[RMDB]
An RNA of 207 nucleotides, treated with DMS and 2A3 and read out base by base.

RNA sequence: GGGAACGACUCGAGUAGAGUCGAAAACCAGGAUGUGGAUGAUGCGUCCAUCCCAAACCAGGAGUUGACAUUGAGGUAUAGUCGUAAGACAGUACAUCGAGGUCACUAAGGAAAGGUAUACCGCCCCAGGCUGGUAAACAGAGCAGGGAAAAGCCCUCAGUAAGGUAAGGUUCGCCUUACCUUACUGAAAAGAAACAACAACAACAAC
Reactivity to DMS in 0.01 (KOAc 150mM, MgCl2 10mM, bicine 150mM(pH8.5), 24C), signal-to-noise 1, nucleotides 027 to 156: c030c020a130g000g050a060u000g030u000g040g030a040u000g000a120u010g010c060g000u000c050c000a140u000c040c010c010a100a090a120c000c030a180g000g010a060g010u000u010g020a060c040a090u010u000g020a060g050g060u000a020u000a220g040u000c000g000u000a080a120g040a020c020a200g040u000a010c000a070u010c020g020a020g020g000u000c090a070c050u010a170a100g030g020a100a110a040g020g010u000a110u010a070c060c060g030c020c000c010c060a130g010g060c010u000g010g010u000a000a060a120c060a060g000a040g000c080a110g010g030g030a070a020a080a060g000c000c030c000u000
Reactivity to 2A3 in 0.01 (KOAc 150mM, MgCl2 10mM, bicine 150mM(pH8.5), 24C), signal-to-noise 3, nucleotides 027 to 156: c000c000a000g090g000a070u090g060u150g020g020a020u070g010a110u180g090c080g040u010c030c010a030u010c010c000c010a040a070a060c030c020a040g050g050a070g080u100u070g040a000c010a040u020u050g010a020g000g030u020a020u030a060g020u020c030g010u080a090a020g000a000c020a020g020u030a000c000a010u010c000g020a010g020g000u010c010a000c040u070a060a060g060g010a110a050a020g040g010u050a070u050a150c030c020g050c010c000c000c000a010g010g040c020u030g000g090u150a050a020a030c050a020g060a010g060c040a020g000g010g020a010a050a020a030g050c000c020c000u000
For DMS the reverse transcriptase was MarathonRT.
The reactions ran in a buffer of 150 mM KOAc, 10 mM MgCl2 and 150 mM bicine (pH 8.5), at 24 C.
The 2A3 profile rests on 4,562 reads.
Source: RMDB library ARCHII, as collected in RNAgym.